This 177-nucleotide RNA was probed chemically with 2A3 and DMS. The 2A3 profile rests on 3,576 reads. The reactions ran in a buffer of 150 mM KOAc, 10 mM MgCl2 and 150 mM bicine (pH 8.5), at 24 C. For DMS the reverse transcriptase was MarathonRT. It was measured as part of the RMDB library TTRDEL.
RNA sequence: GGGAACGACUCGAGUAGAGUCGAAAAGAUAUGGAAUCCCGACAUGCUGCACAUCGGAAACGAUGUUCCCAGCAACAGCGUGGAUUCCUAAGUCAAAGGGCUAGAAACGUUCGCGUUUCUAGCCCAAGGAUACUUUUCUGUUCGCAGAAAAGUAUCCAAAAGAAACAACAACAACAAC
Reactivity to 2A3 in 0.01 (KOAc 150mM, MgCl2 10mM, bicine 150mM(pH8.5), 24C), signal-to-noise 2, nucleotides 027 to 126: g020a010u070a060u110g010g010a000a000u030c000c020c010g030a150c070a110u200g000c010u020g000c140a000c000a020u000c020g030g000a040a070a020c010g000a010u000g030u020u030c000c030c000a000g000c040a070a080c050a030g120c030g130u300g030g000a010u000u000c000c010u030a090a000g030u000c040a050a150a080g000g000g000c010u000a010g010a010a010a000c030g020u070u090c300g020c010g190u020u040u000c010u010a000g000c000c000c000a000a000
Reactivity to DMS in 0.01 (KOAc 150mM, MgCl2 10mM, bicine 150mM(pH8.5), 24C), signal-to-noise 3, nucleotides 027 to 126: g010a010u010a300u000g000g000a040a010u010c000c000c000g010a090c160a130u010g020c010u000g040c280a050c010a020u020c000g020g000a090a060a210c010g010a010u000g000u000u000c130c110c020a010g000c020a030a080c300a100g010c010g000u010g010g000a030u000u000c000c000u000a040a110g040u000c020a110a070a140g000g000g010c000u000a000g000a000a020a010c010g000u000u010c230g000c000g010u000u000u000c000u000a010g000c010c000c000a000a000